An RNA of 207 nucleotides, treated with 2A3 and read out base by base.
It was measured as part of the RMDB library RNAMAK.
The reactions ran in a buffer of 150 mM KOAc, 10 mM MgCl2 and 150 mM bicine (pH 8.5), at 24 C.
Values cover nucleotides 27 to 156.
[RMDB]
RNA sequence: GGGAACGACUCGAGUAGAGUCGAAAAGGGGUCUUGAGUGGAUUUAGACAUGCUCGUACCUGAAGCCUCCACGGGUACAUGAGCAACAGCUAAAUCGUAACAUCUCAAGACGGAGGCACCCAAAAGGUCUCGCAACUGUUCGCAGUUGCGAGACCAAGUGUUAUGGACGAUUCGUCGUCCAUAACACAAAAGAAACAACAACAACAAC
Reactivity to 2A3 in 0.01 (KOAc 150mM, MgCl2 10mM, bicine 150mM(pH8.5), 24C), signal-to-noise 2, nucleotides 027 to 156: g090g010g000g020u010c000u010u000g000a000g000u060g020g030a000u010u020u040a050g060a140c180a140u040g000c000u000c020g000u020a000c010c000u000g010a130a020g020c000c000u010c000c010a010c010g000g010g000u070a040c070a150u280g000a000g000c030a040a060c080a150g040c010u000a010a010a010u000c010g020u030a030a020c020a240u140c000u000c000a000a000g000a000c010g010g010a000g000g000c000a030c000c000c010a080a130a030a070g000g000u000c010u000c010g000c000a000a000c000u000g070u090u060c290g020c100a000g010u000u000g000c010g010a000g000a000c000c000a000a000